The data come from the RNA Mapping Database (RMDB), library 15KLIB. An RNA of 170 nucleotides, treated with 2A3 and DMS and read out base by base. The 2A3 profile rests on 31,356 reads. For DMS, 45,337 sequencing reads were counted. DMS (dimethyl sulfate) methylates the pairing face of unpaired adenines and cytosines. DMS adducts were read by reverse transcription with MarathonRT.

RNA sequence: GGGAACGACUCGAGUAGAGUCGAAAAUAAACACUGUUAAAUUUUGUGACCACAUGGUCAAGGCUGGUUUAGUCGGUGUGCUCACACUAGACAACCAGGACCUUAAUGGCAAGUGGUAUGAUUUUGGAUGCUAACCUGUUCGCAGGUUAGAAAAGAAACAACAACAACAAC
Reactivity to 2A3 in 0.01 (KOAc 150mM, MgCl2 10mM, bicine 150mM(pH8.5), 24C), signal-to-noise 9, nucleotides 027 to 129: u170a020a070a010c060a020c090u100g080u140u210a060a100a220u120u140u100u130g140u080g040a020c000c010a020c030a080u300g040g000u000c010a020a010g020g000c010u000g010g000u060u030u110a070g000u000c010g000g010u010g000u050g080c060u100c080a010c010a000c000u060a120g010a000c000a000a000c000c000a000g030g010a030c000c000u040u080a150a100u100g000g000c010a040a030g010u000g020g000u020a060u130g170a150u040u070u080u080g100g010a050u190g020
Reactivity to DMS in 0.01 (KOAc 150mM, MgCl2 10mM, bicine 150mM(pH8.5), 24C), signal-to-noise 8, nucleotides 027 to 129: u000a050a110a070c140a110c090u000g000u050u040a040a090a110u040u040u040u030g010u000g020a040c000c000a010c050a030u070g000g000u030c020a000a020g030g040c000u010g000g000u010u020u060a030g020u020c030g000g000u000g000u000g040c110u090c230a080c020a030c000u000a100g020a020c020a030a010c020c000a000g000g000a100c010c000u030u000a050a070u010g020g020c020a040a020g060u000g020g020u000a050u030g020a100u030u030u030u040g010g010a180u060g010